[RMDB]
RNA sequence: GGGAACGACUCGAGUAGAGUCGAAAAAUUUGACAUGAGCAAAAGGCACAAAUAGUUGUGUUUCGUGUGGUCGGAUCGUUUCAACUCAAAACUAAAACCAAACUGUUGGCAAUCAAGUCAAUUAAACAACCGUAUAGGGAUUCGUCCCUAUACGGUUAAAAGAAACAACAACAACAAC
Reactivity to DMS in 0.01 (KOAc 150mM, MgCl2 10mM, bicine 150mM(pH8.5), 24C), signal-to-noise 2, nucleotides 027 to 126: a040u000u000u000g000a040c030a060u000g010a120g000c080a050a080a100a100g000g000c020a050c030a030a080a170u020a080g030u000u000g010u010g020u000u000u000c070g020u000g010u000g000g010u020c030g010g000a070u000c100g010u000u000u010c070a060a060c090u020c080a040a070a050a120c070u020a050a090a120a110c040c050a050a070a070c120u000g000u000u000g020g000c030a070a060u020c100a010a070g000u010c020a030a040u000u010a030a120a110c160
Reactivity to 2A3 in 0.01 (KOAc 150mM, MgCl2 10mM, bicine 150mM(pH8.5), 24C), signal-to-noise 2, nucleotides 027 to 126: a010u100u050u100g020a030c060a060u090g130a030g080c010a040a070a040a030g020g000c030a000c020a090a100a040u250a110g150u070u100g010u010g000u040u040u070c030g020u080g020u030g040g080u040c020g040g030a070u000c050g000u000u000u120c040a070a040c040u070c120a000a070a040a030c030u090a110a010a000a140c020c010a080a080a030c050u060g030u050u010g000g020c010a000a090u060c030a060a100g040u010c000a010a000u090u150a130a090a040c060